The data come from the RNA Mapping Database (RMDB), libraries RFM100 and RFMREP. This 177-nucleotide RNA was probed chemically with 2A3 and DMS.
[RMDB]
RNA sequence: GGGAACGACUCGAGUAGAGUCGAAAACAGACACAUUCACACUGGGCCAAGAGCAGCUGCCAUUGCAGAUUCGAGUCACGUCCUUUUUUCCUUCCUUCUCCUUCUUGGAGUUACAACAGAAGCUGGGUAACUAUCGCAAGUUCGCUUGCGAUAGUUAAAAAGAAACAACAACAACAAC
Reactivity to 2A3 in 0.01 (KOAc 150mM, MgCl2 10mM, bicine 150mM(pH8.5), 24C), signal-to-noise 5, nucleotides 027 to 126: c030a000g100a020c020a010c000a120u110u110c050a030c030a030c080u030g040g010g000c020c010a120a030g040a010g030c020a020g020c020u050g010c020c020a080u070u170g000c040a010g050a110u030u070c010g000a010g020u000c000a010c100g060u040c010c000u020u040u010u000u060u040c020c000u030u040c020c000u050u030c020u010c000c010u030u180c040u050u130g000g010a010g010u050u090a090c060a190a010c000a040g060a070a010g050c040u060g010g070g000
Reactivity to DMS in 0.01 (KOAc 150mM, MgCl2 10mM, bicine 150mM(pH8.5), 24C), signal-to-noise 4, nucleotides 027 to 126: c090a120g020a090c100a080c100a070u000u000c040a050c050a080c070u020g010g010g010c040c040a090a050g000a090g010c040a100g010c040u020g010c040c080a070u000u020g030c050a060g000a090u000u000c020g000a070g000u010c020a130c110g000u010c020c000u000u000u030u010u010u020c030c010u010u010c040c050u010u020c020u010c040c010u000u020c090u030u020g010g000a130g020u030u020a050c150a060a120c150a090g010a040a050g000c030u000g020g000g020

The reactions ran in a buffer of 150 mM KOAc, 10 mM MgCl2 and 150 mM bicine (pH 8.5), at 24 C. For 2A3 the reverse transcriptase was SuperScript II with manganese.